[RMDB]
RNA sequence: GGGAACGACUCGAGUAGAGUCGAAAAGACAGAAUAUUGCGGUCUAAAGCCAAAAGUUUUGUAAGCCCUGUAGACAAGCAAAAGAAGACAUAUGCUGAAAUUUUAAUGGAGAAAAUGCAACUGGCUACAAUUUCUGUUAAUUCGUUAACAGAAAUUGAAAAGAAACAACAACAACAAC
Reactivity to 2A3 in 0.01 (KOAc 150mM, MgCl2 10mM, bicine 150mM(pH8.5), 24C), signal-to-noise 3, nucleotides 027 to 126: g040a020c020a020g050a040a000u300a180u180u050g000c000g040g000u030c130u300a140a100a000g000c000c000a000a030a000a020g000u000u020u000u060g020u030a060a040g010c030c010c000u050g130u110a060g020a060c050a150a040g020c010a010a060a030a090g040a070a000g060a000c030a040u120a050u140g000c020u040g070a120a170a220u190u290u100u170a160a100u130g040g030a070g040a020a080a010a020u070g030c010a030a050c080u090g100g000c010u040a020
Reactivity to DMS in 0.01 (KOAc 150mM, MgCl2 10mM, bicine 150mM(pH8.5), 24C), signal-to-noise 5, nucleotides 027 to 126: g000a050c010a050g000a030a040u000a070u010u000g020c300g010g010u000c050u020a120a140a300g000c010c010a030a300a040a060g000u000u000u000u000g010u000a060a100g000c020c010c010u010g000u020a080g010a050c070a040a070g000c060a030a050a070a140g020a090a090g000a070c080a020u010a060u000g010c040u000g000a060a090a090u010u000u010u020a040a080u030g010g000a120g000a070a060a070a050u000g000c050a050a070c110u000g000g010c050u000a130
This 177-nucleotide RNA was probed chemically with 2A3 and DMS. The DMS profile rests on 3,760 reads. The 2A3 profile rests on 2,002 reads. The RNA was probed in 150 mM KOAc, 10 mM MgCl2 and 150 mM bicine (pH 8.5) at 24 C.